[RMDB]
RNA sequence: GGGAACGACUCGAGUAGAGUCGAAAAACGGCUGGCUACGGCGAGCCGAAUCGGGCCAAAGGCAGUCGCCCGACGACACAGGCGAUCGUUCGCCCAAGCGCUGCACACGACUAUACGUAGUCGUGAAUUGAUCACGCAACCUUCGGGUUGCGUGAAACUCCUUUACUAACUUCGGUUAGUAAAGGAGAAAAGAAACAACAACAACAAC
Reactivity to DMS in 0.01 (KOAc 150mM, MgCl2 10mM, bicine 150mM(pH8.5), 24C), signal-to-noise 1, nucleotides 027 to 156: a170c050g000g030c000u000g040g030c040u000a040c190g080g020c000g040a100g000c000c000g010a010a010u010c020g000g010g020c000c010a100a150a120g030g000c050a130g000u010c100g000c010c020c000g020a070c060g020a190c090a100c060a040g020g010c000g000a120u000c070g020u000u000c060g000c000c000c070a060a190g010c070g000c020u000g000c040a300c040a020c000g000a010c010u000a100u010a150c300g070u000a010g010u010c010g030u000g010a060a060u000u000g010a200u000c000a020c000g000c000a010a000c000c010u000u010c300g010g020g030u000u000g040c010g020u000g020a000a050a100
Reactivity to 2A3 in 0.01 (KOAc 150mM, MgCl2 10mM, bicine 150mM(pH8.5), 24C), signal-to-noise 3, nucleotides 027 to 156: a000c000g000g000c000u060g030g010c020u050a010c160g100g000c060g030a000g000c000c000g000a010a040u020c000g020g000g020c030c040a090a090a150g100g010c020a010g040u050c030g010c000c000c000g000a020c020g000a000c040a020c050a140g170g040c030g000a020u030c040g110u080u040c060g240c020c000c000a040a050g020c030g020c070u050g000c020a010c000a000c040g000a000c000u010a010u050a130c300g170u040a010g000u000c000g000u000g020a000a010u070u110g040a030u030c000a000c010g000c010a010a000c010c000u020u070c120g110g000g000u000u000g000c000g000u000g000a000a000a000